[RMDB]
RNA sequence: GGGAACGACUCGAGUAGAGUCGAAAAGAUAUGGACCAGCAGAAGCGAUAAGAAGCAGUCGGAAACGACUGGCUUCUUUUGACGCUUCGCUGGUCCUAAGUCAAAGGCAACCUGUUCGCAGGUUGCCGGUUAGUUUAACGUUCGCGUUAAACUAACCAAAAGAAACAACAACAACAAC
Reactivity to 2A3 in 0.01 (KOAc 150mM, MgCl2 10mM, bicine 150mM(pH8.5), 24C), signal-to-noise 4, nucleotides 027 to 126: g010a000u030a010u070g000g010a000c000c000a000g000c100a170g010a020a000g010c040g110a160u100a300a000g000a000a000g010c000a000g000u000c000g000g000a010a020a010c000g000a010c010u010g030g010c000u000u010c000u010u000u000u030g010a010c030g000c000u010u000c000g010c000u000g000g000u010c000c000u000a010a010g000u000c000a040a040a050g000g000c010a000a000c000c010u020g050u090u100c300g000c140a000g000g010u000u000g000c000c000
Reactivity to DMS in 0.01 (KOAc 150mM, MgCl2 10mM, bicine 150mM(pH8.5), 24C), signal-to-noise 5, nucleotides 027 to 126: g000a020u000a130u010g000g000a010c000c000a020g000c000a140g040a010a010g010c010g020a120u010a010a010g010a010a010g010c000a020g000u000c000g020g000a030a030a050c000g010a000c000u000g020g010c000u000u000c000u000u000u000u020g010a180c120g020c010u000u000c000g000c000u000g000g000u000c000c000u000a000a050g010u000c010a120a140a190g000g010c000a010a010c010c000u010g010u000u020c270g030c010a010g010g010u000u000g010c000c010